The data come from the RNA Mapping Database (RMDB), library OK2TST. This 177-nucleotide RNA was probed chemically with 2A3 and DMS. Values are in units of 0.01, from 0 to 300, in steps of 10. For DMS the reverse transcriptase was MarathonRT. For 2A3, 3,121 sequencing reads were counted. 2A3 adducts were read by reverse transcription with SuperScript II with manganese. The RNA was probed in 150 mM KOAc, 10 mM MgCl2 and 150 mM bicine (pH 8.5) at 24 C.
RNA sequence: GGGAACGACUCGAGUAGAGUCGAAAAUGAAGCUGACCGAGCGCGUCGGCGUGGUCGAGCAGCCGGGCGGCUACGAGAUCCGCCACUUCGGCGAACCGCCGAUCGCGGGGACCUGAUGGCCGAUCGAUGAAGGACUCUAAUUCGUUAGAGUCCUUCAAAAAGAAACAACAACAACAAC
Reactivity to 2A3 in 0.01 (KOAc 150mM, MgCl2 10mM, bicine 150mM(pH8.5), 24C), signal-to-noise 2, nucleotides 027 to 126: u120g020a040a010g020c020u010g020a040c010c010g030a070g030c030g020c030g170u090c030g020g020c100g040u070g130g060u020c000g000a020g020c040a020g030c020c000g040g000g000c030g000g020c000u040a050c070g040a050g000a070u010c000c000g030c000c010a030c110u040u030c000g010g000c010g000a040a030c030c020g000c010c060g120a140u120c040g000c020g030g020g000g000a020c010c000u020g020a050u050g050g000c000c010g020a030u060c020g030a030
Reactivity to DMS in 0.01 (KOAc 150mM, MgCl2 10mM, bicine 150mM(pH8.5), 24C), signal-to-noise 6, nucleotides 027 to 126: u010g020a140a090g020c020u000g010a060c020c010g010a120g030c020g010c060g030u000c070g020g010c010g050u010g030g020u000c010g010a130g010c040a120g020c020c020g000g000g010c020g020g000c010u010a080c110g000a170g000a070u000c010c200g010c000c010a060c140u000u000c030g010g010c000g010a230a210c080c040g010c000c100g000a060u000c140g000c000g000g000g000g010a210c300c010u000g010a060u000g000g010c010c100g000a030u000c040g010a180